[RMDB]
RNA sequence: GGGAACGACUCGAGUAGAGUCGAAAAGAUAUGGAGCAACGCGACGAUCUACUAGUCGGAAACGACUAGGUAGGGAGCGUACUCCUAAGUCAAAAGACUUUGUAGGGGUUCGCCCCUACAAAGUCAACGAAUUACUAUGCUUCGGCAUAGUAAUUCGAAAAGAAACAACAACAACAAC
Reactivity to 2A3 in 0.01 (KOAc 150mM, MgCl2 10mM, bicine 150mM(pH8.5), 24C), signal-to-noise 3, nucleotides 027 to 126: g020a020u090a040u170g010g010a000g010c190a290a030c010g100c020g170a300c010g000a120u040c010u020a010c000u010a000g000u000c020g030g010a050a040a040c010g000a000c020u020a020g040g160u040a000g030g000g010a030g000c010g000u010a020c000u000c000c010u040a200a060g040u020c030a040a050a140a200g010a020c000u010u000u000g000u000a000g020g030g010g050u060u070c270g120c000c000c000c000u010a010c000a000a000a000g000u000c000a000a000
Reactivity to DMS in 0.01 (KOAc 150mM, MgCl2 10mM, bicine 150mM(pH8.5), 24C), signal-to-noise 1, nucleotides 027 to 126: g000a020u000a300u000g000g000a020g010c020a070a020c010g020c000g010a060c260g000a030u000c000u000a020c010u000a000g010u000c020g000g000a140a080a160c000g000a000c000u000a000g020g000u010a010g000g000g000a050g020c000g010u000a060c000u000c010c000u000a060a110g000u010c020a060a100a170a120g000a020c000u000u000u000g020u010a000g010g000g000g010u010u000c270g010c000c000c000c000u010a000c000a000a000a000g000u000c010a050a080